[RMDB]
Conditions: 150 mM KOAc, 10 mM MgCl2 and 150 mM bicine (pH 8.5), 24 C. An RNA of 177 nucleotides, treated with DMS and 2A3 and read out base by base. The DMS profile rests on 9,235 reads. It was measured as part of the RMDB library M2PK50. For 2A3 the reverse transcriptase was SuperScript II with manganese. Reactivities are rounded to 0.1 and cut off at 0 and 3.
RNA sequence: GGGAACGACUCGAGUAGAGUCGAAAAACAUUGGCCUUCGGGCCAAUGUACUGGAAAUAAAGCCGAAAGGCUACGCUUUCCUUAUUUGGCGAAAGCCUGCGAGAUUAUGUAAGUUCGCUUACAUAAACUUAAGUUAUAUUUUCGAAUAUAACUUAAGAAAAGAAACAACAACAACAAC
Reactivity to DMS in 0.01 (KOAc 150mM, MgCl2 10mM, bicine 150mM(pH8.5), 24C), signal-to-noise 7, nucleotides 027 to 126: a040c000a010u000u000g000g010c000c000u000u010c220g030g010g020c000c000a000a000u000g010u000a050c130u010g000g000a010a010a020u000a070a110a050g020c000c000g000a130a070a140g010g010c000u000a030c200g010c210u000u000u000c010c000u010u000a150u010u000u010g010g010c010g000a110a090a120g010c010c010u010g000c190g010a110g010a170u000u000a010u000g000u000a000a010g010u000u010c230g010c000u000u000a010c000a010u000a010a030a160
Reactivity to 2A3 in 0.01 (KOAc 150mM, MgCl2 10mM, bicine 150mM(pH8.5), 24C), signal-to-noise 5, nucleotides 027 to 126: a010c000a010u000u000g000g000c010c010u020u030c290g060g020g000c000c000a000a000u000g000u000a010c020u050g020g070a010a020a040u120a090a130a010g000c000c010g050a060a030a020g010g000c010u010a020c100g010c020u020u030u030c000c000u050u120a240u120u180u140g010g000c030g040a120a010a000g010c000c020u010g040c100g100a230g020a160u040u050a000u020g000u000a000a020g020u030u100c220g020c070u000u010a000c000a000u020a010a040a030